[RMDB]
RNA sequence: GGGAACGACUCGAGUAGAGUCGAAAAUCGCUUGGCGACGCCGACGCGACUGUCGUCGAGCAGAUGCUGCGCGUGGCGGCGACGGGACGAAACAUCCUGUUCCUGCCUGAUCCUUCGGCGGAUGCGCGAGACAUUUGGCAUUCGUGCCAAAUGUCUCAAAAGAAACAACAACAACAAC
Reactivity to DMS in 0.01 (KOAc 150mM, MgCl2 10mM, bicine 150mM(pH8.5), 24C), signal-to-noise 3, nucleotides 027 to 126: u010c030g010c010u000u010g020g020c000g000a060c050g010c000c020g000a060c130g000c070g010a080c110u000g020u000c010g020u000c010g010a050g000c040a060g010a070u000g010c070u000g000c070g020c010g050u000g010g020c010g020g000c150g010a000c020g000g000g010a050c030g010a110a130a120c280a300u000c020c000u000g010u000u000c300c010u000g000c020c010u000g000a040u010c030c010u000u020c080g010g010c060g000g000a070u000g010c040g020c060
Reactivity to 2A3 in 0.01 (KOAc 150mM, MgCl2 10mM, bicine 150mM(pH8.5), 24C), signal-to-noise 3, nucleotides 027 to 126: u050c010g010c010u020u010g010g020c000g000a000c010g020c020c010g070a070c060g040c100g230a200c130u180g030u130c000g000u000c010g010a010g020c020a000g030a020u170g040c050u100g020c000g000c000g030u040g020g040c020g000g000c030g010a020c000g010g000g020a030c030g110a110a040a050c060a040u000c000c000u010g000u040u020c000c000u020g010c000c010u040g030a040u040c010c030u060u090c040g050g010c010g020g000a050u070g120c050g040c040
Chemical mapping of a 177-nucleotide RNA with DMS and 2A3.
Source: RMDB library OK2TST, as collected in RNAgym.
The RNA was probed in 150 mM KOAc, 10 mM MgCl2 and 150 mM bicine (pH 8.5) at 24 C.
As a SHAPE reagent, 2A3 marks flexible, mostly unpaired nucleotides at the ribose 2'-OH.